[RMDB]
RNA sequence: GGGAACGACUCGAGUAGAGUCGAAAAGAUAUGGAUGUCGUCGACAUGAUCCUCGUUCGGAAACGAACGAGCGAUCAACAGCGACAGACAUCCUAAGUCAAAAUCCAGCGUCUUCGGACGCUGGAAAGAGUAUAGAGCAGUUCGCUGCUCUAUACUCAAAAGAAACAACAACAACAAC
Reactivity to DMS in 0.01 (KOAc 150mM, MgCl2 10mM, bicine 150mM(pH8.5), 24C), signal-to-noise 4, nucleotides 027 to 126: g000a010u000a030u010g010g000a020u000g020u000c000g020u010c010g000a040c050a300u020g010a010u000c000c000u000c000g010u000u000c000g010g010a030a000a040c000g010a000a010c000g010a000g010c230g010a010u000c010a050a060c230a120g000c010g000a010c000a110g030a000c000a000u000c010c000u000a010a060g000u000c010a140a100a130a180u000c000c000a010g000c010g000u000c010u000u020c300g020g000a030c000g000c000u000g000g000a010a020a040
Reactivity to 2A3 in 0.01 (KOAc 150mM, MgCl2 10mM, bicine 150mM(pH8.5), 24C), signal-to-noise 4, nucleotides 027 to 126: g000a000u010a000u040g010g000a000u010g020u000c010g000u000c010g000a040c160a300u300g000a000u010c010c010u000c000g000u020u000c000g010g010a020a010a010c010g000a010a000c000g000a000g000c040g000a010u000c000a010a030c160a010g000c000g000a010c100a040g000a000c010a000u000c000c010u000a000a000g000u010c030a050a030a000a300u020c010c010a000g000c000g010u000c010u080u130c300g160g000a010c010g000c010u000g010g000a010a000a020
About this RNA
An RNA of 177 nucleotides, treated with DMS and 2A3 and read out base by base. The DMS profile rests on 4,981 reads. The 2A3 profile rests on 9,843 reads. 2A3 adducts were read by reverse transcription with SuperScript II with manganese. Source: RMDB library TTRDES, as collected in RNAgym. Conditions: 150 mM KOAc, 10 mM MgCl2 and 150 mM bicine (pH 8.5), 24 C.